[RMDB]
This 177-nucleotide RNA was probed chemically with DMS. For DMS the reverse transcriptase was MarathonRT. The data come from the RNA Mapping Database (RMDB), library TTRINS. Values are in units of 0.01, from 0 to 300, in steps of 10.
RNA sequence: GGGAACGACUCGAGUAGAGUCGAAAAGAUAUGGAGUCGUUAACGGACGGGCUCAUCGAUCACAUCGUAACAUCACUCGGAAACGAGUGUGGAUGUGGGAGAGCAGUCCGUUAACGACUCCUAAGUCCCUAAUGCAUCCGUUCGCGGAUGCAUUAGGAAAAGAAACAACAACAACAAC
Reactivity to DMS in 0.01 (KOAc 150mM, MgCl2 10mM, bicine 150mM(pH8.5), 24C), signal-to-noise 2, nucleotides 027 to 126: g000a090u010a300u020g010g000a000g000u000c000g000u000u000a000a010c020g000g000a020c000g000g010g010c000u000c000a250u010c260g000a110u000c010a000c000a000u000c010g000u010a120a220c260a050u000c020a010c000u010c000g010g000a100a150a170c000g010a040g020u000g020u020g030g010a020u010g010u000g010g010g000a030g000a010g050c010a230g000u000c000c000g020u000u000a000a000c000g020a000c010u000c000c000u000a000a060g000u000c030